Chemical mapping of a 177-nucleotide RNA with DMS and 2A3.
The RNA was probed in 150 mM KOAc, 10 mM MgCl2 and 150 mM bicine (pH 8.5) at 24 C.
The 2A3 profile rests on 899 reads.
Source: RMDB library OK2TST, as collected in RNAgym.

RNA sequence: GGGAACGACUCGAGUAGAGUCGAAAACAUAGUUGGGAUUCAUGGACUGUCGUCAAAUGAGUCUGACAAAAAUUUCUUUAUACCAUUUGUCGACAAUUUCGAGAAAGAGUUUUUGUUAAAUGCACAACCCUACUCUCUAUUUCGAUAGAGAGUAGGGAAAAGAAACAACAACAACAAC
Reactivity to DMS in 0.01 (KOAc 150mM, MgCl2 10mM, bicine 150mM(pH8.5), 24C), signal-to-noise 2, nucleotides 027 to 126: c070a070u020a100g020u010u030g020g020g010a080u020u000c000a040u000g000g010a020c100u010g010u000c070g000u000c030a030a040a030u010g000a080g000u000c080u000g020a030c150a000a040a040a070a120u000u000u010c060u000u000u010a120u010a150c060c050a060u000u000u000g010u000c010g000a020c080a040a040u000u010u010c030g000a080g020a020a040a060g000a090g010u000u000u000u000u000g010u000u000a050a050a100u030g010c100a060c200a080a120
Reactivity to 2A3 in 0.01 (KOAc 150mM, MgCl2 10mM, bicine 150mM(pH8.5), 24C), signal-to-noise 2, nucleotides 027 to 126: c010a040u280a060g060u090u080g120g030g030a050u030u060c030a060u080g030g050a040c030u030g060u110c030g000u000c060a120a060a000u060g020a040g070u000c070u130g060a100c140a050a150a020a060a080u120u300u110c060u060u190u110a200u070a100c000c000a050u000u040u130g050u080c020g020a040c040a080a070u100u150u150c120g030a070g050a030a060a010g070a030g010u040u000u090u000u010g000u060u010a140a280a020u160g000c060a010c010a100a020